Structure probing data (2A3 and DMS) for a 177-nucleotide construct. For 2A3 the reverse transcriptase was SuperScript II with manganese. For 2A3, 3,656 sequencing reads were counted. Conditions: 150 mM KOAc, 10 mM MgCl2 and 150 mM bicine (pH 8.5), 24 C.
RNA sequence: GGGAACGACUCGAGUAGAGUCGAAAACGAGAUGCCCUCAGAUGCCCUGGGCUGCACGCGCAAUACAAUAGCAGGUAGAGAGAGAGACAGGAAGGUGCUCAGAUGGACUAUGUGCUGUAAGGCACAUCUGACACAUUGACUUCGGUCAAUGUGUCAGAAAAGAAACAACAACAACAAC
Reactivity to 2A3 in 0.01 (KOAc 150mM, MgCl2 10mM, bicine 150mM(pH8.5), 24C), signal-to-noise 4, nucleotides 027 to 126: c080g030a040g020a110u130g020c000c010c000u020c040a090g030a100u090g000c000c000c020u020g040g040g000c010u020g010c020a010c020g060c000g000c040a010a060u110a140c040a060a070u060a120g010c050a020g010g020u120a030g010a010g000a000g010a000g000a000g010a070c020a000g000g090a020a020g040g000u060g030c000u000c010a030g020a110u060g000g030a010c050u070a060u060g030u000g000c000u030g090u200a080a100g040g000c010a000c000a030u020
Reactivity to DMS in 0.01 (KOAc 150mM, MgCl2 10mM, bicine 150mM(pH8.5), 24C), signal-to-noise 2, nucleotides 027 to 126: c070g000a050g030a050u010g000c000c030c040u000c080a160g020a070u040g010c000c000c040u000g000g000g000c000u000g000c060a060c090g030c020g020c070a060a080u100a050c080a090a110u020a020g000c100a020g050g020u020a020g030a030g030a010g020a070g000a060g080a000c070a080g000g060a050a050g000g000u020g010c030u000c030a010g030a050u000g030g000a110c060u010a020u040g040u000g010c030u000g000u080a130a140g000g010c000a000c000a020u000